The record gives the reactivity of an RNA of 177 nucleotides to 2A3 and DMS. The data come from the RNA Mapping Database (RMDB), library TTRDES. For DMS, 7,468 sequencing reads were counted.
RNA sequence: GGGAACGACUCGAGUAGAGUCGAAAAGAUAUGGACGUCCUCAACCGAGGUCCUCGGAAACGAGGACCCUCGUGUUGAGGGACGUCCUAAGUCAAAACCGUAUCGUACUGUUCGCAGUACGAUACGGGUUUGUAGGAACCUUCGGGUUCCUACAAACAAAAGAAACAACAACAACAAC
Reactivity to 2A3 in 0.01 (KOAc 150mM, MgCl2 10mM, bicine 150mM(pH8.5), 24C), signal-to-noise 3, nucleotides 027 to 126: g020a020u080a060u230g010g000a000c000g030u020c010c000u000c000a020a000c010c010g000a000g000g000u000c010c000u000c000g070g020a100a080a040c030g010a010g000g000a010c000c020c000u010c010g300u300g010u020u000g010a060g020g000g010a020c000g000u000c000c000u000a010a010g040u030c030a010a010a090a210c010c000g010u000a000u000c010g000u000a000c000u020g090u140u100c300g000c200a000g000u000a020c000g000a000u000a000c010g000g000
Reactivity to DMS in 0.01 (KOAc 150mM, MgCl2 10mM, bicine 150mM(pH8.5), 24C), signal-to-noise 5, nucleotides 027 to 126: g010a040u000a300u000g000g020a000c000g010u000c000c010u000c000a010a010c010c020g010a030g010g010u000c000c000u000c000g000g000a110a070a250c010g020a020g000g000a020c120c060c020u000c010g030u010g000u010u000g000a040g010g010g010a000c000g010u000c000c000u000a010a080g020u010c040a090a070a090a300c010c000g000u000a010u000c000g010u000a000c000u010g010u010u010c200g000c010a010g000u010a000c010g000a000u000a000c000g000g000